[RMDB]
RNA sequence: GGGAACGACUCGAGUAGAGUCGAAAAGUCCAGCGAGGGAAGCAUCUGGCUAGUGGCCAGUCCUUCCGGCGUAAUAAUUUGCGGUUCAUCUUCGGCAUUCACCCGCAGGGUACAGAGCGUUAAUGCCAACUUUCCACGGAUUCGUCCGUGGAAAGUUAAAAGAAACAACAACAACAAC
Reactivity to DMS in 0.01 (KOAc 150mM, MgCl2 10mM, bicine 150mM(pH8.5), 24C), signal-to-noise 3, nucleotides 027 to 126: g000u000c020c030a150g020c060g010a070g000g000g010a020a040g050c160a010u040c000u000g000g000c010u010a110g070u040g000g020c010c010a030g000u010c300c000u000u000c030c020g010g030c010g000u000a080a070u030a110a100u020u000u010g000c100g020g000u000u020c160a110u010c040u010u000c060g020g000c040a010u010u010c110a100c240c050c040g030c030a030g000g010g000u000a090c110a060g000a090g020c110g000u000u010a020a060u010g010c040c020
Reactivity to 2A3 in 0.01 (KOAc 150mM, MgCl2 10mM, bicine 150mM(pH8.5), 24C), signal-to-noise 2, nucleotides 027 to 126: g010u070c000c000a020g000c000g020a050g070g080g000a040a000g000c040a070u050c010u000g000g000c040u060a070g130u110g300g000c010c000a000g000u010c000c000u000u020c000c010g100g000c020g020u010a010a070u120a060a080u090u090u160g020c050g000g050u030u070c030a050u080c160u080u030c010g000g000c000a010u000u030c010a020c000c070c000g050c030a050g100g040g000u180a110c050a040g020a020g020c060g010u050u140a060a010u040g000c010c000